The record gives the reactivity of an RNA of 177 nucleotides to 2A3 and DMS. Source: RMDB library OK2TRN, as collected in RNAgym. The reactions ran in a buffer of 150 mM KOAc, 10 mM MgCl2 and 150 mM bicine (pH 8.5), at 24 C.
RNA sequence: GGGAACGACUCGAGUAGAGUCGAAAAGCAGUUGGCGUUGAGCCAUGGGGUGAACAACUCGAAACCAGAGCAGCAAUAUAAUUUGCAAUGUGUAUACACGUUUGUUGCGGGAUCGAGGCAGCGUGUAAGCAUGAGUACGUUUCGACGUACUCAUGCUAAAAGAAACAACAACAACAAC
Reactivity to 2A3 in 0.01 (KOAc 150mM, MgCl2 10mM, bicine 150mM(pH8.5), 24C), signal-to-noise 2, nucleotides 027 to 126: g090c070a080g020u090u080g010g000c040g040u100u200g090a010g010c060c000a010u030g050g010g020g000u060g040a100a000c020a010a020c020u020c050g010a050a050a000c020c010a040g060a010g050c020a000g030c020a010a000u190a000u060a180a210u060u010u080g050c060a070a050u130g030u040g050u110a030u040a190c000a010c000g000u060u150u180g030u030u050g030c060g000g000g070a040u090c000g000a000g000g000c010a020g000c000g000u040g000u010a120
Reactivity to DMS in 0.01 (KOAc 150mM, MgCl2 10mM, bicine 150mM(pH8.5), 24C), signal-to-noise 2, nucleotides 027 to 126: g020c100a100g010u020u010g000g010c050g020u020u030g020a240g020c010c040a060u020g010g000g010g000u010g020a110a110c100a100a060c000u000c040g010a040a100a100c060c000a150g000a160g050c100a060g010c020a080a020u000a100u030a060a110u000u020u000g020c090a110a030u000g010u000g000u020a160u010a070c060a020c000g010u000u020u000g070u000u020g000c050g030g010g000a220u010c010g000a080g000g010c030a020g010c010g010u000g010u010a050